[RMDB]
RNA sequence: GGGAACGACUCGAGUAGAGUCGAAAACGCAUGAGUGCCUGCUGCACAAGCCGUUACGCUAGAGAGGUUAGGCCCUUUAAUGCCAAACUCAAUGGAAGUGAAACCUCCAAUCAUGUUCACUAACGCAGCACUAGGAGUAUUUCGAUACUCCUAGUGCAAAAGAAACAACAACAACAAC
Reactivity to 2A3 in 0.01 (KOAc 150mM, MgCl2 10mM, bicine 150mM(pH8.5), 24C), signal-to-noise 4, nucleotides 027 to 126: c060g000c030a040u050g020a010g040u050g010c010c040u030g010c020u060g010c040a040c020a070a030g010c020c020g180u170u130a070c090g000c020u040a020g030a010g010a010g160g030u150u190a040g020g020c000c010c020u070u090u130a090a040u100g000c010c000a060a050a050c020u020c060a030a120u090g050g010a060a010g010u010g040a080a010a020c000c020u030c030c010a030a060u070c030a050u130g050u070u050c040a020c090u090a110a030c050g010c140a060
Reactivity to DMS in 0.01 (KOAc 150mM, MgCl2 10mM, bicine 150mM(pH8.5), 24C), signal-to-noise 3, nucleotides 027 to 126: c220g010c070a050u000g000a100g020u000g000c040c010u000g020c060u000g020c040a060c090a100a060g010c030c090g010u000u010a070c190g000c040u000a090g010a140g000a110g000g020u000u010a070g020g010c030c110c040u010u000u010a090a080u010g000c000c080a060a090a110c060u000c020a080a130u010g000g000a100a060g020u000g000a080a040a080c090c070u010c020c070a050a090u030c060a090u000g000u000u000c040a090c090u010a040a070c120g030c230a080

The record gives the reactivity of an RNA of 177 nucleotides to 2A3 and DMS.
2A3 adducts were read by reverse transcription with SuperScript II with manganese.
Conditions: 150 mM KOAc, 10 mM MgCl2 and 150 mM bicine (pH 8.5), 24 C.
Reactivities are given for positions 27 through 126.
For 2A3, 3,804 sequencing reads were counted.
The DMS profile rests on 2,188 reads.